RNA sequence: GGGAACGACUCGAGUAGAGUCGAAAAGAAGAGAAUACAUGGCUGACAAAACCCUGUCCCCACCUCCACGUGGUGUCGGCUGGAUAAUGCUGCAUUAUGUUGCAUUUAUCACCUGGGAAGGAGAAGAGCUACGUGACUAGUUCGCUAGUCACGUAGCAAAAGAAACAACAACAACAAC
Reactivity to DMS in 0.01 (KOAc 150mM, MgCl2 10mM, bicine 150mM(pH8.5), 24C), signal-to-noise 2, nucleotides 027 to 126: g000a030a110g000a080g000a050a110u000a080c100a070u000g000g000c030u000g030a050c070a020a060a070a120c080c020c020u000g000u000c000c020c010c060a120c010c030u010c010c010a040c190g010u000g010g000u000g000u000c020g010g000c040u000g040g000a070u000a000a010u000g000c030u000g030c040a200u010u070a060u080g020u000u010g000c010a000u010u030u000a000u000c000a060c040c000u030g000g020g000a110a040g000g000a100g010a220a030g040a080
Reactivity to 2A3 in 0.01 (KOAc 150mM, MgCl2 10mM, bicine 150mM(pH8.5), 24C), signal-to-noise 4, nucleotides 027 to 126: g130a030a030g120a010g060a100a010u110a120c050a050u070g030g000c020u010g030a030c040a030a080a100a130c000c020c000u020g070u060c010c000c000c000a020c010c000u050c030c020a040c060g110u110g010g020u010g010u060c000g020g000c010u050g020g000a020u020a020a000u020g000c010u030g010c020a070u060u180a150u300g040u020u020g010c010a010u030u040u070a090u030c030a010c040c020u040g000g040g010a060a030g040g030a050g050a080a030g030a010
Background: This 177-nucleotide RNA was probed chemically with DMS and 2A3. Values are in units of 0.01, from 0 to 300, in steps of 10. The data come from the RNA Mapping Database (RMDB), library OK1LIB.